[RMDB]
RNA sequence: GGGAACGACUCGAGUAGAGUCGAAAAGAGGAUGACUUCGGUCAUCCUCAAAUAAGGAAACCUGCGUGGUGCCGAGAGUAAUUGCAAACACGCCAAACUCAAAAAGUGAAUUCUUCGGAAUUCACAAGCACUGUAGAAAGUUCGCUUUCUACAGUGCAAAAGAAACAACAACAACAAC
Reactivity to 2A3 in 0.01 (KOAc 150mM, MgCl2 10mM, bicine 150mM(pH8.5), 24C), signal-to-noise 1, nucleotides 027 to 126: g000a010g000g010a000u010g000a000c020u030u060c210g040g020u000c000a000u000c010c000u000c000a000a000a000u030a000a020g000g020a100a070a060c010c040u000g010c030g030u020g000g020u020g030c070c110g060a040g000a010g070u240a230a130u110u120g020c040a000a130a100c000a010c020g040c030c050a150a100a060c060u120c190a000a000a190a040a000g000u000g000a010a020u020u020c030u040u080c170g030g000a010a000u020u000c000a000c010a040a000
Reactivity to DMS in 0.01 (KOAc 150mM, MgCl2 10mM, bicine 150mM(pH8.5), 24C), signal-to-noise 1, nucleotides 027 to 126: g000a030g030g010a020u000g000a000c000u010u010c190g040g000u000c000a000u000c000c020u010c000a000a070a130u020a100a120g000g020a110a090a150c010c000u000g000c050g010u000g000g000u000g010c010c090g000a060g050a230g000u000a170a070u010u000g040c000a090a000a130c020a030c040g020c010c300a030a050a100c190u020c080a120a020a050a050a150g000u000g000a000a000u000u000c000u000u000c160g020g000a000a000u000u000c000a000c020a050a170